[RMDB]
Overview:
Conditions: 150 mM KOAc, 10 mM MgCl2 and 150 mM bicine (pH 8.5), 24 C. This 177-nucleotide RNA was probed chemically with 2A3 and DMS. Reactivities are given for positions 27 through 126.
RNA sequence: GGGAACGACUCGAGUAGAGUCGAAAAUGAAACGGCGGGUGGCGGGCAUUCUUACGCAGAUACGGUGCACGAGCAGUGCUAACCACUUUGAUCGUCACAGAGUUGAGGUGGACGAGCUGUUGCGCUGCGAGCAGUAUUAGUUCGCUAAUACUGCUCGAAAAGAAACAACAACAACAAC
Reactivity to 2A3 in 0.01 (KOAc 150mM, MgCl2 10mM, bicine 150mM(pH8.5), 24C), signal-to-noise 9, nucleotides 027 to 126: u110g010a040a030a000c030g020g020c010g000g020g030u030g030g010c060g020g000g010c010a050u070u030c020u050u070a070c090g020c060a030g030a100u110a110c060g040g060u050g020c030a010c060g030a030g040c080a010g020u010g040c020u040a060a060c010c000a010c000u050u030u100g050a080u050c030g110u080c060a050c040a110g120a040g070u110u130g040a040g020g060u030g020g040a080c050g010a040g010c030u040g030u070u050g020c030g000c020u040g020
Reactivity to DMS in 0.01 (KOAc 150mM, MgCl2 10mM, bicine 150mM(pH8.5), 24C), signal-to-noise 8, nucleotides 027 to 126: u030g000a120a090a080c070g000g000c030g000g010g020u010g000g000c100g010g000g000c070a030u010u000c040u010u010a110c130g000c040a040g000a100u030a100c130g000g010u000g000c030a090c120g000a070g010c100a070g000u000g000c050u010a110a120c050c030a040c020u000u010u010g000a050u010c040g010u020c150a110c130a110g000a080g010u010u000g000a050g000g010u000g010g000a080c100g010a080g010c020u020g000u010u010g010c080g000c060u010g010

Source: RMDB library OK1LIB, as collected in RNAgym.